[RMDB]
RNA sequence: GGGAACGACUCGAGUAGAGUCGAAAAGAAAGAAAGCCAAGACCAAGCUUGGGAGUGGUCAUCCAAGGUAAGAGGUGCCAAAGGCACCCGCCACUCCCGCUUCCAAAAGGGCUUGGUCUUGAGCGAAAUAAAAAGUUACAUUCGUGUAACUUUUUAUAAAAGAAACAACAACAACAAC
Reactivity to DMS in 0.01 (KOAc 150mM, MgCl2 10mM, bicine 150mM(pH8.5), 24C), signal-to-noise 8, nucleotides 027 to 126: g020a130a100a110g010a090a070a220g010c000c000a010a010g000a010c000c000a010a010g000c000u000u000g010g010g000a010g020u000g010g010u000c010a070u030c140c210a150a040g010g010u000a000a000g010a300g000g000u000g010c010c010a100a120a220g010g020c010a010c000c000c000g010c000c000a010c000u000c000c000c000g000c080u010u030c170c210a060a070a110a150g000g000g000c000u000u000g000g000u000c000u000u000g000a060g000c010g010a020a100
Reactivity to 2A3 in 0.01 (KOAc 150mM, MgCl2 10mM, bicine 150mM(pH8.5), 24C), signal-to-noise 4, nucleotides 027 to 126: g150a020a080a010g110a030a080a010g000c000c000a000a000g000a000c000c010a000a000g010c010u140u180g000g000g010a000g010u000g000g000u010c010a030u110c110c060a110a060g000g000u000a000a000g040a040g000g000u000g010c020c020a220a090a100g050g000c000a000c000c000c000g000c010c000a000c000u000c000c000c000g000c000u030u010c030c020a040a100a030a080g050g010g000c000u000u000g000g000u000c000u000u000g010a010g000c000g000a030a040